About this RNA:
The record gives the reactivity of an RNA of 177 nucleotides to 2A3 and DMS. For DMS, 909 sequencing reads were counted. The RNA was probed in 150 mM KOAc, 10 mM MgCl2 and 150 mM bicine (pH 8.5) at 24 C. 2A3 adducts were read by reverse transcription with SuperScript II with manganese. The 2A3 profile rests on 783 reads.

[RMDB]
RNA sequence: GGGAACGACUCGAGUAGAGUCGAAAAGUGGGCUUGAAACCCUUGGUUCUUACGCCAUGUAUGCCUUGGCCAUCCUAUUAGGAUGUGGUUUGACCUCACUGCUUGAACGUUGUAUAGGCGGACAAGGGUAUCGCGUGCACUUCGGUGCACGCGAUACAAAAGAAACAACAACAACAAC
Reactivity to 2A3 in 0.01 (KOAc 150mM, MgCl2 10mM, bicine 150mM(pH8.5), 24C), signal-to-noise 1, nucleotides 027 to 126: g030u030g050g000g020c000u010u020g120a020a000a040c000c050c000u000u030g080g000u300u020c060u080u050a110c050g050c040c030a060u120g060u040a150u080g050c000c000u020u110g000g030c000c010a050u050c000c010u110a200u260u280a070g010g030a070u070g070u120g070g010u000u040u150g030a060c000c010u000c010a070c030u140g000c010u000u030g020a040a020c010g010u000u090g060u160a150u090a220g010g000c030g020g030a030c000a010a030g040g000
Reactivity to DMS in 0.01 (KOAc 150mM, MgCl2 10mM, bicine 150mM(pH8.5), 24C), signal-to-noise 1, nucleotides 027 to 126: g010u020g000g000g010c070u010u000g000a100a120a080c010c040c010u010u000g010g010u000u000c120u000u000a110c130g000c000c040a110u020g000u020a100u000g000c040c030u000u000g000g000c090c000a070u000c000c010u010a150u000u010a030g010g030a020u000g000u000g000g000u010u000u000g010a050c210c020u000c050a100c040u030g000c010u000u000g000a030a150c060g000u000u000g000u020a090u030a120g000g020c090g010g000a140c050a030a030g020g000